The record gives the reactivity of an RNA of 177 nucleotides to 2A3 and DMS. The RNA was probed in 150 mM KOAc, 10 mM MgCl2 and 150 mM bicine (pH 8.5) at 24 C. For DMS, 4,750 sequencing reads were counted. Values are in units of 0.01, from 0 to 300, in steps of 10. It was measured as part of the RMDB library M2PK90. DMS adducts were read by reverse transcription with MarathonRT. Reactivities are given for positions 27 through 126.
RNA sequence: GGGAACGACUCGAGUAGAGUCGAAAAUGAUUGAGCGUAGCACACACUCAGACUGUACGACAGUGUGACACACACCUACGCUAGUGCAUCGUGUGUGUGAUAUCGAUGUAGCACGAAAAUGAAGUAAUACUCACCAUAGGUUCGCCUAUGGUGAGUAAAAAGAAACAACAACAACAAC
Reactivity to 2A3 in 0.01 (KOAc 150mM, MgCl2 10mM, bicine 150mM(pH8.5), 24C), signal-to-noise 2, nucleotides 027 to 126: u250g020a120u080u100g020a030g010c020g010u020a000g000c010a040c020a000c010a000c020u030c020a030g060a160c070u010g000u070a030c060g040a030c080a000g020u000g040u010g200a040c010a000c000a000c000a010c150c040u100a050c100g000c060u030a020g010u040g010c000a030u000c030g000u000g000u000g000u000g010u030g090a030u030a050u050c040g010a020u100g070u190a030g010c040a040c120g090a110a090a000a100u240g030a100a010g040u130a050a070
Reactivity to DMS in 0.01 (KOAc 150mM, MgCl2 10mM, bicine 150mM(pH8.5), 24C), signal-to-noise 5, nucleotides 027 to 126: u010g000a100u020u000g020a070g020c040g020u000a070g000c050a060c030a040c000a060c070u010c040a110g010a050c140u000g000u010a060c100g010a060c130a050g020u000g000u000g010a100c160a090c120a070c070a050c070c070u010a050c070g010c070u010a100g010u000g010c010a070u000c070g000u000g020u000g010u010g000u010g000a090u010a040u010c070g000a070u010g010u000a060g000c020a050c050g000a020a050a060a090u000g000a070a110g020u000a070a110